[RMDB]
RNA sequence: GGGAACGACUCGAGUAGAGUCGAAAAUAAGGAAACCUUCCUGGUGGCGAGAAUAAAUGAGCACUCGCGCUCAUAAACCGCUCGUUCGCGAGCGGAAAAGAAACAACAACAACAAC
Reactivity to DMS in 0.01 (KOAc 150mM, MgCl2 10mM, bicine 150mM(pH8.5), 24C), signal-to-noise 2, nucleotides 027 to 095: u020a070a050g010g000a050a120a090c070c040u000u000c000c010u010g000g010u010g010g030c020g000a060g000a120a090u040a070a100a050u010g000a020g020c020a100c080u010c110g000c090g030c010u000c020a030u000a030a060a100c030c000g010c040u010c010g000u010u020c140g040c010g010a010g040c050g000g010a000
Reactivity to 2A3 in 0.01 (KOAc 150mM, MgCl2 10mM, bicine 150mM(pH8.5), 24C), signal-to-noise 3, nucleotides 027 to 095: u240a040a010g150g030a080a040a040c010c030u020u020c010c020u040g040g030u040g070g030c030g000a050g060a090a080u150a110a180a050u120g030a030g000c030a020c070u090c040g030c010g000c020u010c010a020u010a010a070a010c000c020g040c000u020c020g020u050u030c080g000c010g060a010g000c000g000g030a060